[RMDB]
RNA sequence: GGGAACGACUCGAGUAGAGUCGAAAAUGAAAAGUGGUCUCUCUCACAAGCUGUCACUGGUCUAAUAGACACAGGAAGAAUAUCUGAAGCUGAAACUCUCUGCACAAAGGUAUUUUAUGGAAUGUGCAUUGAAACUCAUGGAUUCUUAUCUUACUGGUCCAAUGCGAUAUUUCGAUAUCGCAUUGGAAAAAGAAACAACAACAACAAC
Reactivity to DMS in 0.01 (KOAc 150mM, MgCl2 10mM, bicine 150mM(pH8.5), 24C), signal-to-noise 2, nucleotides 027 to 156: u010g020a070a080a070a140g010u000g030g010u000c010u000c050u000c030u000c030a120c030a030a080g010c010u000g020u000c040a100c010u010g020g020u000c030u000a140a170u010a190g020a120c040a110c040a030g000g000a110a090g010a100a090u000a000u000c050u010g010a110a100g030c020u010g000a150a110a140c070u010c030u010c050u000g010c020a040c020a040a150a180g000g010u010a050u010u000u020u000a170u020g040g030a100a200u000g010u000g060c020a060u010u000g000a070a060a080c060u000c050a070u020g010g010a110u000u000c040u000u000a060u000c040u000u010a120c050u000g010g020
Reactivity to 2A3 in 0.01 (KOAc 150mM, MgCl2 10mM, bicine 150mM(pH8.5), 24C), signal-to-noise 3, nucleotides 027 to 156: u110g040a010a020a030a040g040u020g030g030u020c010u000c000u000c000u020c030a030c020a030a050g040c050u060g060u120c030a020c040u000g000g020u000c020u050a130a210u090a290g010a000c060a000c010a080g050g040a040a050g020a030a030u050a030u080c040u050g070a060a000g000c030u030g010a060a030a030c020u030c000u000c010u050g000c010a010c000a040a060a030g070g000u150a180u080u160u040u070a070u140g050g070a140a030u030g000u000g010c020a000u010u070g030a080a040a020c020u010c060a050u060g050g000a010u110u010c010u100u120a050u070c010u040u080a050c050u070g020g050
The record gives the reactivity of an RNA of 207 nucleotides to DMS and 2A3. For 2A3, 2,012 sequencing reads were counted. Source: RMDB library OK3TST, as collected in RNAgym. DMS (dimethyl sulfate) methylates the pairing face of unpaired adenines and cytosines. Reactivities are given for positions 27 through 156.